[RMDB]
RNA sequence: GGGAACGACUCGAGUAGAGUCGAAAAGGCUUUCGGUCAUUACCGAUACCGCAGUGGUGGUGACUUUCUGCAAACCAGCAAUCUUAGUCUGGAUCUCUUCCGUCGAUGCGUGGGUGCGCUGUGACAAGGUGGAUAAAUACUUCGGUAUUUAUCCACCAAAAGAAACAACAACAACAAC
Reactivity to 2A3 in 0.01 (KOAc 150mM, MgCl2 10mM, bicine 150mM(pH8.5), 24C), signal-to-noise 4, nucleotides 027 to 126: g060g000c020u050u040u090c060g000g010u020c020a080u030u130a020c010c000g030a090u070a120c050c060g050c090a060g060u070g100g000u020g000g030u020g040a050c000u020u080u010c040u040g020c020a050a080a130c000c010a020g010c040a040a160u090c080u120u130a050g080u060c020u030g040g050a080u020c020u020c000u100u010c050c030g020u020c020g050a070u070g030c050g030u050g040g110g040u120g020c020g000c010u030g050u090g050a010c030a050a070
Reactivity to DMS in 0.01 (KOAc 150mM, MgCl2 10mM, bicine 150mM(pH8.5), 24C), signal-to-noise 5, nucleotides 027 to 126: g010g000c040u000u000u000c080g000g000u000c110a050u010u010a050c000c020g010a100u010a110c090c070g010c140a100g020u010g020g040u000g010g020u000g000a040c030u000u000u000c080u010g010c040a060a120a150c060c040a070g010c060a120a050u010c120u000u010a090g000u020c020u000g000g010a130u000c060u010c030u010u000c070c040g020u000c070g020a100u000g010c030g000u000g020g000g020u010g010c050g020c030u010g020u000g000a070c090a070a130